Source: RMDB library TTRINS, as collected in RNAgym.
Structure probing data (DMS) for a 177-nucleotide construct.
Reactivities are given for positions 27 through 126.
The reactions ran in a buffer of 150 mM KOAc, 10 mM MgCl2 and 150 mM bicine (pH 8.5), at 24 C.
RNA sequence: GGGAACGACUCGAGUAGAGUCGAAAAGAUAUGGAGAAUGCUCGGACUUUAAGGUCGGAACUACACACGGUUCGGAAACGAACCUGGUGUGCCGACCUUAAAGUCCGUGAGGCAUUCUCCUAAGUCACGUACGCUAAUAGUUCGCUAUUAGCGUACGAAAAGAAACAACAACAACAAC
Reactivity to DMS in 0.01 (KOAc 150mM, MgCl2 10mM, bicine 150mM(pH8.5), 24C), signal-to-noise 2, nucleotides 027 to 126: g010a070u000a300u000g010g000a030g000a030a010u010g010c000u000c000g000g010a030c000u010u000u000a000a000g030g010u010c000g000g000a110a060c130u020a290c010a010c020a020c050g020g000u000u000c000g000g020a100a090a280c010g020a000a000c000c000u000g010g000u010g010u000g000c000c000g000a010c010c010u000u000a000a000a000g000u010c000c000g000u010g030a080g010g020c000a000u000u000c010u000c000c000u000a000a030g000u000c050a270